[RMDB]
RNA sequence: GGGAACGACUCGAGUAGAGUCGAAAAGAUAUGGAGCGUGAAGCUGAGGAUCUUGGAUUUACAGGCUAAGUAUAUCGGAAACGAUAUAUAUGCCUGUUGUCAGAUCCUCAGCCACGCUCCUAAGUCACGUACAACCUAUGUUCGCAUAGGUUGUACGAAAAGAAACAACAACAACAAC
Reactivity to 2A3 in 0.01 (KOAc 150mM, MgCl2 10mM, bicine 150mM(pH8.5), 24C), signal-to-noise 2, nucleotides 027 to 126: g050a000u100a030u270g000g000a020g020c000g000u000g090a300a040g010c000u010g010a000g020g020a000u040c030u140u300g190g030a050u300u240u180a030c000a000g000g000c000u010a170a160g030u000a030u000a000u010c010g040g000a140a090a050c030g010a000u010a000u000a000u000a000u180g000c000c010u000g000u010u000g000u010c000a000g000a000u010c000c010u000c000a010g000c000c000a010c000g000c000u000c000c000u010a010a000g000u000c020a020
Reactivity to DMS in 0.01 (KOAc 150mM, MgCl2 10mM, bicine 150mM(pH8.5), 24C), signal-to-noise 3, nucleotides 027 to 126: g000a030u000a300u010g010g000a000g010c010g050u000g010a290a200g010c000u000g010a020g020g000a030u000c010u000u030g010g000a030u020u010u010a010c000a040g010g010c000u010a050a300g000u000a000u000a000u000c000g020g000a170a120a260c000g000a000u000a010u010a000u000a300u000g000c000c000u000g000u000u000g000u000c000a040g000a030u000c000c010u000c000a000g000c000c000a000c000g000c000u000c010c000u000a010a040g010u000c030a300

Source: RMDB library TTRINS, as collected in RNAgym. This 177-nucleotide RNA was probed chemically with 2A3 and DMS. The RNA was probed in 150 mM KOAc, 10 mM MgCl2 and 150 mM bicine (pH 8.5) at 24 C. For 2A3 the reverse transcriptase was SuperScript II with manganese.